[RMDB]
The record gives the reactivity of an RNA of 177 nucleotides to DMS. Conditions: 150 mM KOAc, 10 mM MgCl2 and 150 mM bicine (pH 8.5), 24 C. DMS adducts were read by reverse transcription with MarathonRT. The data come from the RNA Mapping Database (RMDB), library TTRINS.
RNA sequence: GGGAACGACUCGAGUAGAGUCGAAAAGAUAUGGACAUUACUACCCACCGUCCCCCUAUUAGCCGAUGAAAGCUUUCGGAAACGAAAGCUGGAGGCUAAUAGGGUGGACGAGGUAAUGUCCUAAGUCGAAUUUUAUGAUCUUCGGAUCAUAAAAUUCAAAAGAAACAACAACAACAAC
Reactivity to DMS in 0.01 (KOAc 150mM, MgCl2 10mM, bicine 150mM(pH8.5), 24C), signal-to-noise 2, nucleotides 027 to 126: g000a150u000a230u020g010g000a000c000a000u000u000a010c010u000a190c000c000c000a300c150c000g030u000c000c010c010c000c000u000a000u000u000a000g000c000c000g000a130u020g010a290a110a020g000c000u000u010u010c000g000g000a220a090a210c010g000a010a000a000g010c000u000g020g010a000g010g010c010u000a000a000u000a000g000g020g010u000g000g000a000c000g000a000g000g010u000a000a010u000g000u000c000c000u010a020a100g020u010c100